[RMDB]
RNA sequence: GGGAACGACUCGAGUAGAGUCGAAAAGCAAAAGAUUAUCCAGGUGUAGGGGUGAAAUUCGUAGAGAUCUGGUGGAUAAUGAACCGGUGGCGAAGGCGAAAGAUAACCGCUGAAAAGAAGAAUUGAAGUCAACACAAGGAUUCGUCCUUGUGUUGACAAAAGAAACAACAACAACAAC
Reactivity to DMS in 0.01 (KOAc 150mM, MgCl2 10mM, bicine 150mM(pH8.5), 24C), signal-to-noise 1, nucleotides 027 to 126: g000c010a080a050a130a090g000a100u020u000a070u000c010c000a120g030g010u010g000u000a090g010g010g060g010u000g000a060a010a100u000u000c070g040u000a050g010a080g020a070u000c050u000g030g000u000g000g020a080u020a040a050u000g020a090a110c100c010g010g030u010g050g000c120g010a050a060g020g020c010g010a040a030a020g000a040u030a040a120c120c070g000c090u030g000a000a010a060a060g030a100a050g010a100a090u000u000g000a160a220

Background:
Structure probing data (DMS) for a 177-nucleotide construct.